Source information
Chemical mapping of a 207-nucleotide RNA with 2A3. For 2A3 the reverse transcriptase was SuperScript II with manganese. Source: RMDB library VIROID, as collected in RNAgym.
[RMDB]
RNA sequence: GGGAACGACUCGAGUAGAGUCGAAAAUCAAGUUUCUUGAUCUUCUUGUUGGAUCGCCGGAGAUCCUUCUCGAGCAGUCGCCUUUUCUUCCUUUCUUCUACCCACUGUUCGAGGAUCUCCUCCCUCUCCUUCGAGGACGGGUUCGCGACGGGUUGGCGUAACCUCAAAUCUUCGGAUUUGAGGUUACAAAAGAAACAACAACAACAAC
Reactivity to 2A3 in 0.01 (KOAc 150mM, MgCl2 10mM, bicine 150mM(pH8.5), 24C), signal-to-noise 1, nucleotides 027 to 156: u120c030a080a040g010u050u130u190c030u100u050g050a060u000c030u130u000c000u040u140g050u070u050g080g010a140u020c030g040c100c060g040g010a000g020a000u010c020c000u130u000c070u010c020g010a020g010c010a010g030u050c030g130c100c030u060u190u210u110c060u140u210c040c040u070u160u190c070u120u040c020u160a080c000c030c000a000c020u010g000u010u000c010g000a000g000g000a000u000c000u000c010c000u020c000c000c000u030c000u040c010c020u100u180c190g080a070g020g020a060c040g010g000g010u070u090c120g000c000g070a020c030g000g120g000u000u060g000g010c020